An RNA of 177 nucleotides, treated with DMS and read out base by base.
DMS adducts were read by reverse transcription with MarathonRT.
For DMS, 516 sequencing reads were counted.
Values cover nucleotides 27 to 126.
The data come from the RNA Mapping Database (RMDB), library OK2TRN.
RNA sequence: GGGAACGACUCGAGUAGAGUCGAAAAGUCAAGGGCGUCUGGCUCGAAGGCUGUCAGGACACCCAGCUGAUGACCAGCAAGAAGCAGAUGCAAGAUAUCCAUGGCUGGCUCAUCGACCGCGCCGAAACCCUGAUUAGUCCUUCGGGACUAAUCAGGGAAAAGAAACAACAACAACAAC
Reactivity to DMS in 0.01 (KOAc 150mM, MgCl2 10mM, bicine 150mM(pH8.5), 24C), signal-to-noise 1, nucleotides 027 to 126: g000u000c020a100a070g000g010g030c000g020u030c060u000g030g160c040u000c050g070a120a210g000g010c040u000g030u000c050a120g020g000a110c030a090c060c060c000a100g000c040u000g000a070u000g000a080c000c000a150g000c010a060a110g000a250a270g000c230a070g000a010u000g000c080a130a130g000a170u000a050u000c020c070a190u000g000g010c010u000g000g000c080u000c050a020u010c090g000a050c090c070g000c120g010c090c000g000a040a110a110